Chemical mapping of a 177-nucleotide RNA with 2A3 and DMS. The 2A3 profile rests on 2,157 reads. It was measured as part of the RMDB library OK1LIB. 2A3 adducts were read by reverse transcription with SuperScript II with manganese.
RNA sequence: GGGAACGACUCGAGUAGAGUCGAAAACACUAAUUUGGCAAAAAUGUAUUCGGUAAUACAAGGUAAGACAGAGAGCCCUGCCGCUUAUUUAGAAAGAUUAAUGGAAACCUUGAGACAGUAUACCCCCCAAAGGGGAAAGAUUCGUCUUUCCCCUUUGAAAAGAAACAACAACAACAAC
Reactivity to 2A3 in 0.01 (KOAc 150mM, MgCl2 10mM, bicine 150mM(pH8.5), 24C), signal-to-noise 4, nucleotides 027 to 126: c020a000c010u110a050a150u160u050u090g120g010c080a100a100a030a030a060u090g020u040a090u040u050c080g060g070u180a060a040u060a140c030a040a050g050g040u120a070a030g030a060c030a050g230a000g000a020g080c020c020c030u020g050c010c000g010c040u040u060a070u090u240u070a090g070a030a050a000g110a090u110u190a060a060u100g040g000a040a070a030c000c020u030u020g000a000g010a040c000a000g000u020a010u040a090c010c000c000c000c000
Reactivity to DMS in 0.01 (KOAc 150mM, MgCl2 10mM, bicine 150mM(pH8.5), 24C), signal-to-noise 6, nucleotides 027 to 126: c050a110c100u030a040a080u010u020u000g010g020c080a020a060a050a080a100u020g010u000a030u000u010c080g010g010u010a040a080u010a060c030a050a050g000g000u000a050a090g000a140c040a060g010a100g010a140g000c040c020c020u000g010c040c030g000c040u020u010a030u030u030u030a100g010a090a050a090g010a090u020u020a050a060u020g000g000a100a080a040c030c020u000u010g000a110g010a050c050a020g020u000a040u020a100c040c000c000c030c040
The reactions ran in a buffer of 150 mM KOAc, 10 mM MgCl2 and 150 mM bicine (pH 8.5), at 24 C.